An RNA of 177 nucleotides, treated with DMS and 2A3 and read out base by base.
[RMDB]
RNA sequence: GGGAACGACUCGAGUAGAGUCGAAAAGCGACAUGGACCCUGAACCCACCCCUCUCCCGCGAUGGAGAAUUUUCCUUUUCCGGUAAGCCUGCCUCUGCUGUCUUACCGGUGUGUAAGACAGUGACACACUAGAAGUUCUCUUCGGAGAACUUCUAGUAAAAGAAACAACAACAACAAC
Reactivity to DMS in 0.01 (KOAc 150mM, MgCl2 10mM, bicine 150mM(pH8.5), 24C), signal-to-noise 4, nucleotides 027 to 126: g010c050g010a070c050a090u020g000g010a100c020c010c010u010g020a110a110c050c020c010a130c050c010c010c000u010c020u000c030c000c050g000c170g000a060u020g010g010a100g000a080a090u010u010u020u000c020c020u000u010u010u010c020c020g010g000u010a050a080g000c010c010u000g000c020c050u010c090u020g000c010u000g000u000c010u000u000a010c000c010g020g020u010g010u030g020u000a010a010g000a010c010a020g020u000g010a120c180a060c160
Reactivity to 2A3 in 0.01 (KOAc 150mM, MgCl2 10mM, bicine 150mM(pH8.5), 24C), signal-to-noise 6, nucleotides 027 to 126: g030c020g060a060c030a080u090g030g030a060c010c000c000u020g030a050a060c010c010c000a030c010c000c000c000u000c000u010c020c000c020g100c050g070a090u150g030g010a040g050a050a060u100u060u040u070c020c000u040u030u050u040c000c000g030g010u050a040a000g010c010c000u040g010c000c020u070c060u090g000c000u010g010u010c010u000u000a010c000c010g150g060u120g000u020g000u020a030a020g010a000c010a020g000u020g050a030c040a000c000

Description
It was measured as part of the RMDB libraries RFM100 and RFMREP. The RNA was probed in 150 mM KOAc, 10 mM MgCl2 and 150 mM bicine (pH 8.5) at 24 C. Values are in units of 0.01, from 0 to 300, in steps of 10.